[RMDB]
RNA sequence: GGGAACGACUCGAGUAGAGUCGAAAACUGAUCUCAGUAAUCAAAGAGGAGAGUGACAGGGCAUGAGGUCAGAGAGGUAAUGGGAAUGAAGGUAGAUCAUGUAGAAUCUUGUAGGUCACUCUAAAGACUUUGGCUUUUAUUGUGAACAAUAUAAAAAUCGAUCCAGUAUAUUCGUAUACUGGAUCGAAAAAGAAACAACAACAACAAC
Reactivity to 2A3 in 0.01 (KOAc 150mM, MgCl2 10mM, bicine 150mM(pH8.5), 24C), signal-to-noise 4, nucleotides 027 to 156: c020u030g040a050u030c020u020c040a060g040u110a080a130u120c080a090a070a040g050a040g060g020a030g000a000g040u040g010a020c040a090g000g040g020c060a060u090g010a010g020g010u030c030a000g030a000g000a010g020g040u100a110a080u100g010g010g000a000a050u070g010a060a010g030g000u040a030g010a060u020c020a020u130g070u070a030g050a050a030u030c030u050u080g070u090a030g000g070u010c000a000c000u020c000u050a110a090a000g020a040c020u070u050u080g050g000c010u080u080u060u050a050u080u060g020u060g030a030a020c010a070a000u260a000u300a270a030a250a070a010
Reactivity to DMS in 0.01 (KOAc 150mM, MgCl2 10mM, bicine 150mM(pH8.5), 24C), signal-to-noise 2, nucleotides 027 to 156: c070u000g000a070u000c000u000c050a130g030u000a100a060u000c060a030a040a110g000a240g020g020a080g020a110g010u000g000a050c030a100g010g010g020c100a130u000g020a050g060g020u000c030a030g000a140g000a090g000g010u000a070a120u010g010g000g000a100a090u020g010a070a050g010g000u000a100g020a070u000c030a100u010g000u000a150g010a060a120u000c040u000u010g020u030a150g040g000u000c050a010c000u000c010u010a040a040a110g000a030c030u000u000u000g010g010c070u010u000u000u000a010u000u020g000u000g000a040a200c090a040a140u000a120u000a080a030a040a100a220